[RMDB]
RNA sequence: GGGAACGACUCGAGUAGAGUCGAAAACCAAACAUUUUCUCAAUUACUUUCUCGAUUUAAAUCUUUUGCUACUUUGACUGAACUACUUCAAGUGCACAAUGUUAUGCUUCAAGUAAACUUUUCCUUUCAAGCAAGGCAACUAAACACAGAAAUUCAAAAUAUGCAGGGUAUUCGUACCCUGCAUAUUAAAAGAAACAACAACAACAAC
Reactivity to 2A3 in 0.01 (KOAc 150mM, MgCl2 10mM, bicine 150mM(pH8.5), 24C), signal-to-noise 3, nucleotides 027 to 156: c010c000a010a070a010c030a030u060u030u140u010c040u020c030a130a180u110u170a110c040u080u200u000c030u040c070g080a120u060u120u300a100a250a180u100c070u070u140u070u050g010c000u010a080c020u080u060u100g030a040c010u040g040a020a060c020u040a020c010u060u070c060a070a010g020u010g060c010a010c030a110a110u160g020u150u080a030u130g070c000u010u020c020a040a010g040u050a110a080a050c010u070u050u060u090c010c020u010u030u060c040a010a060g010c000a000a050g040g010c000a020a020c000u100a060a080a020c110a020c010a090g180a040a080a110u300u300c020a060a030
Reactivity to DMS in 0.01 (KOAc 150mM, MgCl2 10mM, bicine 150mM(pH8.5), 24C), signal-to-noise 1, nucleotides 027 to 156: c000c010a160a130a110c080a180u010u000u000u010c000u010c030a120a180u000u000a140c080u000u020u000c030u000c060g010a140u010u010u000a080a060a180u000c020u000u000u000u000g010c020u020a050c040u010u010u000g000a070c010u000g030a040a060c060u000a040c030u000u000c040a040a070g040u000g060c120a080c050a080a150u010g000u000u010a160u030g010c000u000u000c040a000a060g010u000a060a100a070c060u000u010u000u000c060c030u010u000u010c040a030a130g040c000a120a120g010g010c020a010a080c020u000a040a060a070c020a070c060a200g020a040a060a130u000u000c040a050a100